[RMDB]
Record summary: This 177-nucleotide RNA was probed chemically with DMS and 2A3. Reactivities are given for positions 27 through 126.
RNA sequence: GGGAACGACUCGAGUAGAGUCGAAAAUGAAGAGAUUGGCACUUCCACGUUGCAAUCUCGUGCGGUAGCGGGCGUCGCUAACAAAACGCUGAUUUUCGCAAUGCCGGGUUCGACCAAAGCGUGCCGAGACUAUCAUCCACUUCGGUGGAUGAUAGUCAAAAGAAACAACAACAACAAC
Reactivity to DMS in 0.01 (KOAc 150mM, MgCl2 10mM, bicine 150mM(pH8.5), 24C), signal-to-noise 2, nucleotides 027 to 126: u000g000a160a050g000a090g020a060u000u010g000g010c020a010c030u000u000c050c140a120c200g020u000u000g000c140a020a000u000c000u010c020g030u000g030c040g030g030u000a190g030c040g000g000g020c120g010u010c000g000c000u020a150a040c230a030a150a060a130c080g020c030u010g010a140u020u010u000u000c070g010c020a080a140u000g000c000c020g030g010g010u000u000c010g000a090c000c030a020a050a100g000c120g010u010g010c020c020g050a060
Reactivity to 2A3 in 0.01 (KOAc 150mM, MgCl2 10mM, bicine 150mM(pH8.5), 24C), signal-to-noise 2, nucleotides 027 to 126: u160g000a080a080g060a020g040a080u080u080g100g010c010a000c000u180u070c080c010a010c080g010u050u050g050c050a000a000u010c020u000c070g000u130g010c000g000g020u010a010g000c000g000g030g050c040g100u130c020g030c040u020a060a040c070a070a140a010a000c030g020c090u120g040a090u000u030u050u070c020g030c010a020a030u060g000c000c010g020g000g000u010u000c020g060a020c000c000a000a070a040g100c020g050u050g000c000c010g020a050